[RMDB]
Chemical mapping of a 207-nucleotide RNA with 2A3. The RNA was probed in 150 mM KOAc, 10 mM MgCl2 and 150 mM bicine (pH 8.5) at 24 C.

RNA sequence: GGGAACGACUCGAGUAGAGUCGAAAAAGUCCCUACCAUACAUUGCUAUUAACUGCAGUGCUGGGGGGACGCCGUUCACAGACUAGACGGCGGUGGGUCUUUUCAAACGGAAAGGGCUUAAGAUAUAGUCGGGCCUCUUCGGAGACGAAGAGGGACGGUAAACUAGGCACUUCGGUGCCUAGUUUACAAAAGAAACAACAACAACAAC
Reactivity to 2A3 in 0.01 (KOAc 150mM, MgCl2 10mM, bicine 150mM(pH8.5), 24C), signal-to-noise 1, nucleotides 027 to 156: a000g080u070c030c010c010u120a300c010c030a010u070a070c000a000u020u000g010c010u100a060u170u120a300a140c170u150g000c000a000g030u000g000c030u090g000g000g000g000g000g000a000c010g000c000c000g030u010u010c100a060c000a170g040a000c040u020a030g000a030c000g000g030c140g060g030u080g000g020g000u000c000u020u000u020u010c130a270a280a160c210g110g000a020a000a000g030g000g000c050u170u100a060a020g080a010u060a010u010a060g000u000c000g040g020g020c000c000u010c040u040u000c000g020g000a080g010a050c010g000a000a000g000a000g010g010g040a010c030g000